[RMDB]
Chemical mapping of a 177-nucleotide RNA with DMS. High DMS reactivity at an A or C suggests that its Watson-Crick edge is free. Values are in units of 0.01, from 0 to 300, in steps of 10. For DMS, 897 sequencing reads were counted.
RNA sequence: GGGAACGACUCGAGUAGAGUCGAAAAAAAAAUAUCCUUUUCAGUUAGGCCUUCUGGUGAUGUUUCUGGCCACCCAGGAGGUCUUGAGGAAGAGAAUGUGGACGGCCAGACUUACUCAAAAAAAAAAUGUACAUAUAACGUUCGCGUUAUAUGUACAAAAAGAAACAACAACAACAAC
Reactivity to DMS in 0.01 (KOAc 150mM, MgCl2 10mM, bicine 150mM(pH8.5), 24C), signal-to-noise 1, nucleotides 027 to 126: a000a010a040a100a000u010a080u010c010c000u000u000u000u000c020a060g020u030u000a000g000g000c020c010u010u000c000u010g000g010u010g010a070u010g010u010u000u010c040u000g000g010c010c000a190c060c010c010a030g000g000a020g020g000u000c000u000u010g020a050g040g010a010a000g010a030g000a040a010u000g010u000g010g020a180c180g000g030c020c010a030g000a030c300u010u000a050c080u010c010a010a000a020a000a050a050a020a080a080a090